Source information: An RNA of 177 nucleotides, treated with DMS and 2A3 and read out base by base.

[RMDB]
RNA sequence: GGGAACGACUCGAGUAGAGUCGAAAAUCAAGCCGUUUCGACGGCUUGAACACUUUAGAGUCCUGAGGGACUACGUUCCAGAGUACGGGAGGAACUCUAAGGCCUAGCCCUGCUUCGGCAGGGCUAAUAACUUGAGACAAUUCGUUGUCUCAAGUUAAAAAGAAACAACAACAACAAC
Reactivity to DMS in 0.01 (KOAc 150mM, MgCl2 10mM, bicine 150mM(pH8.5), 24C), signal-to-noise 5, nucleotides 027 to 126: u000c000a010a010g020c010c000g010u000u000u010c200g000a040c000g010g020c000u000u000g000a010a080c160a140c020u000u010u000a020g000a010g010u000c000c000u000g000a300g010g010g000a020c020u000a030c110g000u000u010c090c040a150g000a080g010u010a070c060g020g000g000a100g000g010a060a060c010u000c010u000a010a010g010g000c040c020u000a010g000c000c000c000u000g010c000u000u010c190g020g010c010a020g010g000g010c000u000a000a040
Reactivity to 2A3 in 0.01 (KOAc 150mM, MgCl2 10mM, bicine 150mM(pH8.5), 24C), signal-to-noise 4, nucleotides 027 to 126: u010c000a000a010g000c010c010g010u020u030u120c220g110a020c000g010g000c000u000u010g000a010a010c010a010c010u020u020u030a010g000a010g020u010c000c000u040g040a230g040g070g020a010c040u150a150c250g080u110u030c020c030a020g010a030g190u120a060c070g020g040g040a020g010g030a090a050c000u010c000u010a020a010g020g000c000c010u010a010g020c000c000c000u000g000c010u030u050c140g060g010c010a000g070g010g000c000u000a000a000
The reactions ran in a buffer of 150 mM KOAc, 10 mM MgCl2 and 150 mM bicine (pH 8.5), at 24 C.